An RNA of 177 nucleotides, treated with DMS and 2A3 and read out base by base. The RNA was probed in 150 mM KOAc, 10 mM MgCl2 and 150 mM bicine (pH 8.5) at 24 C. It was measured as part of the RMDB libraries RFM100 and RFMREP.

RNA sequence: GGGAACGACUCGAGUAGAGUCGAAAAUGGCAGUUAUCCUUUUCUAGUCUGGCUCCUGGGACUCUAGAAGGAGUCAGUCUGCAACAAUAAGUGGUGAGUUCUUCUGUCCAGUGUCAGUGUUUGAUGGACAACUCAUACUCUUCGGAGUAUGAGUUGUAAAAGAAACAACAACAACAAC
Reactivity to DMS in 0.01 (KOAc 150mM, MgCl2 10mM, bicine 150mM(pH8.5), 24C), signal-to-noise 5, nucleotides 027 to 126: u010g010g010c040a050g010u010u010a070u010c020c010u000u010u000u000c100u000a050g000u000c010u000g000g000c000u000c010c010u030g010g020g020a120c100u030c110u000a130g010a180a020g010g000a020g010u000c020a010g000u000c000u000g000c140a090a070c160a090a070u010a050a070g010u000g010g010u000g000a070g010u000u000c040u000u000c030u000g000u020c010c040a060g020u010g010u010c040a070g000u010g020u000u010u000g000a130u010g010g000
Reactivity to 2A3 in 0.01 (KOAc 150mM, MgCl2 10mM, bicine 150mM(pH8.5), 24C), signal-to-noise 3, nucleotides 027 to 126: u030g030g030c030a030g000u090u120a140u130c010c000u100u100u030u010c050u140a060g030u000c000u000g020g000c000u000c000c000u000g020g010g140a140c050u000c030u130a090g080a140a020g030g000a020g020u010c000a000g010u000c010u070g020c010a070a040c020a030a140u210a300a070g040u040g040g000u010g070a090g020u110u010c000u030u030c010u030g050u010c020c030a100g000u010g080u110c040a080g020u020g070u100u130u110g180a160u090g030g030